[RMDB]
RNA sequence: GGGAACGACUCGAGUAGAGUCGAAAAAGAGAGAGAGAGAGCGAGCGCGCAAUAUGAGUCUCAGAGGCCAAACUCCGGCCAGUCAGGAGCCGGAAGGCUGAGCCCGGCUGACCUGACUUUGAGCUUCCCCGGAGUUAUCUCGCGUGGGCGCUCGCUAUGAUCCGAUAUUAUUCGUAAUAUCGGAUCAAAAAGAAACAACAACAACAAC
Reactivity to DMS in 0.01 (KOAc 150mM, MgCl2 10mM, bicine 150mM(pH8.5), 24C), signal-to-noise 1, nucleotides 027 to 156: a020g010a090g010a070g000a190g010a100g000a180g000a150g000c000g020a050g010c080g010c040g030c040a070a130u000a100u000g020a080g000u000c040u000c100a100g020a100g000g010c090c020a080a060a040c020u000c000c030g000g010c030c020a040g020u010c050a060g000g000a120g010c010c020g020g030a030a100g020g040c040u000g010a080g000c150c000c000g030g000c000u000g010a220c010c000u000g020a010c010u000u000u010g000a150g030c100u000u000c020c050c000c020g020g000a060g010u000u000a000u000c030u000c030g030c050g000u000g000g010g020c100g000c000u000c000g000c000u010a040
Reactivity to 2A3 in 0.01 (KOAc 150mM, MgCl2 10mM, bicine 150mM(pH8.5), 24C), signal-to-noise 1, nucleotides 027 to 156: a000g090a000g010a000g000a000g010a000g010a020g010a000g000c000g000a000g010c030g000c040g000c000a000a050u150a070u300g010a050g120u030c070u020c070a060g030a040g000g020c050c030a090a020a020c000u000c010c010g020g000c030c000a010g000u010c000a000g000g010a000g000c010c000g060g020a050a050g160g030c070u130g010a030g020c020c000c000g000g040c010u050g050a090c010c050u000g020a020c050u070u080u070g030a010g000c000u050u040c000c020c000c000g000g000a000g000u030u080a030u060c050u010c010g050c000g020u030g010g050g000c000g000c010u000c000g020c000u010a030